Structure probing data (DMS and 2A3) for a 207-nucleotide construct. Reactivities are rounded to 0.1 and cut off at 0 and 3. Source: RMDB library OK3TST, as collected in RNAgym. For 2A3, 1,494 sequencing reads were counted.

[RMDB]
RNA sequence: GGGAACGACUCGAGUAGAGUCGAAAACAACAUACAGUGGGAUUCACAGUUAUUUUAAGACCACGCCAGUGAGGUCAUUCUGAGUCAUGACCUCAUGGAUAGAGGAUUCUAAUCAACUGCUGAAGUCUACAGAGAACUAAUGAACGAAAGAGUCCUAUGCAUUUAGUGGAUUCGUCCACUAAAUGCAAAAAGAAACAACAACAACAAC
Reactivity to DMS in 0.01 (KOAc 150mM, MgCl2 10mM, bicine 150mM(pH8.5), 24C), signal-to-noise 1, nucleotides 027 to 156: c040a170a090c090a080u020a060c000a160g020u000g000g030g000a100u000u000c040a040c020a010g070u000u000a140u000u000u000u000a030a050g000a170c000c030a010c090g020c020c020a140g030u010g010a010g010g050u010c010a020u000u000c040u010g050a260g040u000c100a030u000g000a020c000c020u020c000a010u000g020g020a090u000a090g010a170g050g000a300u000u010c020u000a050a130u000c060a020a070c020u000g000c060u000g010a020a120g000u000c020u000a030c020a120g000a140g030a020a110c030u010a080a070u000g000a020a220c050g010a050a070a060g000a110g040u000c030c020u020a180
Reactivity to 2A3 in 0.01 (KOAc 150mM, MgCl2 10mM, bicine 150mM(pH8.5), 24C), signal-to-noise 3, nucleotides 027 to 156: c020a000a020c030a040u240a030c010a080g060u020g000g020g000a050u010u030c000a000c000a010g000u020u020a160u050u080u020u060a060a020g020a010c010c010a050c060g000c000c000a130g100u030g090a000g000g020u000c010a000u040u000c080u200g130a090g110u190c040a020u000g000a000c010c000u020c000a010u000g000g010a020u180a090g090a070g030g010a040u130u000c000u000a010a050u040c050a000a010c000u010g010c080u010g010a040a000g040u020c000u030a030c020a000g120a020g000a080a010c060u120a140a120u240g040a040a020c060g070a080a140a020g030a020g030u010c030c010u030a040